Notes:
Structure probing data (DMS and 2A3) for a 177-nucleotide construct. The reactions ran in a buffer of 150 mM KOAc, 10 mM MgCl2 and 150 mM bicine (pH 8.5), at 24 C. DMS adducts were read by reverse transcription with MarathonRT. It was measured as part of the RMDB library OK2TRN.

RNA sequence: GGGAACGACUCGAGUAGAGUCGAAAACGUGCAUCGUGCCAGGUGGCGGUGUGAUCGCUGACGUAUUCGAGCGCGUCGACGGCCUGGAUGAUCUCGCCCUCGAGGGCGUCACCGCUGGCCUUCGGGCAUAAAAUCUCGUGUUCGCACGAGAUUUUAUAAAAGAAACAACAACAACAAC
Reactivity to DMS in 0.01 (KOAc 150mM, MgCl2 10mM, bicine 150mM(pH8.5), 24C), signal-to-noise 3, nucleotides 027 to 126: c070g020u010g010c130a040u000c050g010u000g000c020c000a080g020g030u010g010g010c010g000g000u010g020u020g000a090u020c030g030c080u010g010a070c090g010u010a120u000u000c130g020a070g010c130g020c020g000u000c020g000a040c050g020g000c010c000u000g000g010a080u000g000a070u010c050u000c050g000c030c020c000u010c130g010a060g030g010g010c020g020u000c040a020c020c020g000c070u000g010g010c000c000u000u000c040g020g000g010c120
Reactivity to 2A3 in 0.01 (KOAc 150mM, MgCl2 10mM, bicine 150mM(pH8.5), 24C), signal-to-noise 1, nucleotides 027 to 126: c030g000u050g050c040a050u060c030g100u100g290c020c010a040g000g070u060g040g040c020g000g060u090g050u090g080a100u030c030g040c050u060g030a060c070g090u150a170u020u270c060g040a040g030c070g000c010g030u010c020g000a060c010g010g020c000c030u030g060g000a020u050g000a010u070c070u010c060g020c010c000c000u020c020g030a070g030g010g000c020g030u000c000a040c040c000g000c070u060g030g020c000c000u000u000c020g040g010g030c010